The data come from the RNA Mapping Database (RMDB), library OK3TST.
Structure probing data (2A3 and DMS) for a 207-nucleotide construct.
For 2A3 the reverse transcriptase was SuperScript II with manganese.
DMS adducts were read by reverse transcription with MarathonRT.
The reactions ran in a buffer of 150 mM KOAc, 10 mM MgCl2 and 150 mM bicine (pH 8.5), at 24 C.
For 2A3, 667 sequencing reads were counted.
[RMDB]
RNA sequence: GGGAACGACUCGAGUAGAGUCGAAAAUUUACAGAGCAUAAAGAAAAGCUCUAUGUCAAAUAUUUUAAGCAUUGGGGUCAAGAUUAUCAUCCUAAUUGUGUUGAUUGUUAUGAUGAUAUGUGUGUUAUACAUUGUGCUAAUUUUAACACACUGUUUGAUUAACUAAUGCCUUCGGGCAUUAGUUAAUAAAAGAAACAACAACAACAAC
Reactivity to 2A3 in 0.01 (KOAc 150mM, MgCl2 10mM, bicine 150mM(pH8.5), 24C), signal-to-noise 2, nucleotides 027 to 156: u040u100u110a040c090a020g000a000g010c040a020u150a300a290a050g140a090a200a010a010g020c000u000c010u020a110u080g030u060c030a000a090a050u040a110u060u300u190u250a070a010g030c040a000u000u050g000g000g010g030u020c030a010a020g020a070u050u070a000u030c030a030u040c000c030u100a120a110u030u090g010u000g000u040u000g050a300u060u000g030u000u070a110u130g100a050u070g010a040u000a100u070g020u000g000u000g000u020u000a020u030a060c080a040u030u080g080u070g140c020u020a030a090u070u030u000u000a000a000c010a000c000a000c000u000g020u010u030u100g020
Reactivity to DMS in 0.01 (KOAc 150mM, MgCl2 10mM, bicine 150mM(pH8.5), 24C), signal-to-noise 1, nucleotides 027 to 156: u010u010u000a090c040a090g020a090g010c010a280u000a060a110a210g010a180a130a170a260g020c000u010c030u000a100u020g030u000c040a090a070a120u000a030u000u000u000u000a060a130g010c060a070u000u000g000g030g070g010u000c020a040a070g030a140u000u000a030u010c030a140u000c020c060u000a050a100u010u000g020u000g000u000u010g020a170u000u000g000u000u000a090u000g020a150u020g020a060u010a060u010g020u010g000u020g020u000u000a030u000a000c100a070u000u000g030u020g000c150u000a060a060u010u010u000u000a000a010c010a020c050a020c020u060g010u010u010u000g010